[RMDB]
RNA sequence: GGGAACGACUCGAGUAGAGUCGAAAAAGUAUGUCCUUCGGGACAUACUAAAAAGAUAUGGAAUAUCUAAUUACCCGAUGAAAGGCAUCGGAAACGAUGCCUGGAGGGUUGUUAGAGUAUUCCUAAGUCAAAAAAGUUUGUGCUUCGGCACAAACAAAGUACUCUAUCGAUUCGUCGAUAGAGUACUAAAAGAAACAACAACAACAAC
Reactivity to 2A3 in 0.01 (KOAc 150mM, MgCl2 10mM, bicine 150mM(pH8.5), 24C), signal-to-noise 1, nucleotides 027 to 156: a000g000u000a000u000g000u010c000c000u020u040c280g060g000g000a000c000a020u010a000c000u000a010a010a000a010a010g040a020u090a030u070g000g000a010a000u000a000u030c000u000a020a020u010u060a020c000c020c020g160a300u020g030a000a020a000g010g000c000a000u000c000g020g020a030a010a070c010g000a000u000g000c000c010u010g000g010a010g010g000g000u000u000g000u000u000a010g020a020g110u010a020u000u000c000c000u000a080a000g050u050c040a060a060a030a010a060a080g020u010u010u010g010u000g000c010u020u060c210g120g030c000a000c000a000a000a000c000a000a050
Reactivity to DMS in 0.01 (KOAc 150mM, MgCl2 10mM, bicine 150mM(pH8.5), 24C), signal-to-noise 1, nucleotides 027 to 156: a030g010u000a000u000g000u000c010c000u000u000c270g080g000g040a020c000a010u000a030c000u000a010a100a070a080a080g020a190u010a290u000g000g020a070a040u020a160u000c000u000a010a030u000u000a010c040c000c000g000a230u000g010a220a180a020g000g000c000a010u000c000g040g010a140a100a200c010g010a040u000g010c000c000u000g000g030a160g030g020g010u000u000g000u000u000a030g030a100g010u000a010u000u000c020c000u000a010a100g020u000c010a000a060a120a150a150a150g000u000u000u020g060u000g010c070u000u000c300g100g030c070a010c000a000a000a000c000a030a070
The record gives the reactivity of an RNA of 207 nucleotides to 2A3 and DMS. High 2A3 reactivity points to a flexible backbone, as in loops and unpaired stretches. For DMS, 1,698 sequencing reads were counted. Values cover nucleotides 27 to 156. For 2A3 the reverse transcriptase was SuperScript II with manganese.